[RMDB]
RNA sequence: GGGAACGACUCGAGUAGAGUCGAAAAGGGGAACAGCACGGUCGCAACUCUGACAGUGCCACAGUCACGGGCGUGCCGCUAUCGGUCGUCCGUGCUCGUUACGUGGCUCGGGAUUGCGAAAGUGUAAACGUGCCGUGAAUUUCGAUUCACGGCACGUAAAAGAAACAACAACAACAAC
Reactivity to 2A3 in 0.01 (KOAc 150mM, MgCl2 10mM, bicine 150mM(pH8.5), 24C), signal-to-noise 3, nucleotides 027 to 126: g080g020g010g050a050a030c010a050g020c000a000c010g050g030u010c000g000c020a000a010c150u000c000u030g070a070c060a170g050u030g040c020c000a000c020a010g070u060c000a010c010g000g000g030c020g080u200g090c030c010g150c150u230a160u300c000g000g000u000c000g000u000c000c000g000u010g000c010u010c000g030u030u070a090c110g010u000g000g000c000u020c010g020g030g010a040u000u000g000c000g000a000a010a000g000u000g010u010a090a070
Reactivity to DMS in 0.01 (KOAc 150mM, MgCl2 10mM, bicine 150mM(pH8.5), 24C), signal-to-noise 1, nucleotides 027 to 126: g000g050g000g000a130a040c140a110g010c000a000c030g020g000u000c000g060c000a000a000c240u000c010u020g000a170c140a150g000u000g000c030c000a000c000a050g020u000c000a020c000g000g010g020c000g050u110g000c020c000g000c300u020a200u110c030g030g020u010c020g010u000c000c000g000u000g040c150u000c020g010u050u070a100c200g030u000g000g010c000u000c120g070g000g000a030u000u000g000c000g000a000a020a090g000u000g000u010a090a060
Overview: The record gives the reactivity of an RNA of 177 nucleotides to 2A3 and DMS. Source: RMDB library RFM100, as collected in RNAgym. The RNA was probed in 150 mM KOAc, 10 mM MgCl2 and 150 mM bicine (pH 8.5) at 24 C. Reactivities are given for positions 27 through 126.